[RMDB]
RNA sequence: GGGAACGACUCGAGUAGAGUCGAAAAGUCCGCUACAAGCUUGCAUAUUGCAAUGUCCUGGCUGAAUUCGGUAAAUAUCCUCGACCAGACUGGCACCAUUUCAGGGGAAAAUGCAUAUGUUCGGGGACUAUCAUUUUACUUUCGAGUAAAAUGAUAGAAAAGAAACAACAACAACAAC
Reactivity to DMS in 0.01 (KOAc 150mM, MgCl2 10mM, bicine 150mM(pH8.5), 24C), signal-to-noise 9, nucleotides 027 to 126: g020u000c010c030g010c120u010a110c120a100a080g010c060u000u000g010c020a070u010a090u010u010g010c040a050a050u000g000u010c030c030u000g010g020c030u010g010a060a100u000u000c070g020g010u010a060a070a110u010a140u000c020c010u000c030g000a090c070c030a040g000a100c220u000g000g010c060a070c080c040a060u010u010u010c140a100g000g000g000g000a050a040a080a140u000g010c020a040u000a100u000g010u000u000c030g020g000g000g010a150
Reactivity to 2A3 in 0.01 (KOAc 150mM, MgCl2 10mM, bicine 150mM(pH8.5), 24C), signal-to-noise 8, nucleotides 027 to 126: g020u000c000c010g010c030u080a060c040a110a040g030c030u040u040g010c030a030u080a120u190u290g010c020a040a080u110g030u040c000c030u040g090g000c020u030g050a090a080u120u050c040g040g010u080a050a110a060u150a070u060c000c020u010c020g020a030c020c010a020g020a090c080u080g060g000c020a030c040c010a060u090u170u160c090a080g000g000g010g050a020a060a020a050u070g000c020a020u040a010u080g010u010u020c020g000g000g020g010a000
An RNA of 177 nucleotides, treated with DMS and 2A3 and read out base by base. It was measured as part of the RMDB library OK2TST. 2A3 adducts were read by reverse transcription with SuperScript II with manganese. The DMS profile rests on 18,097 reads.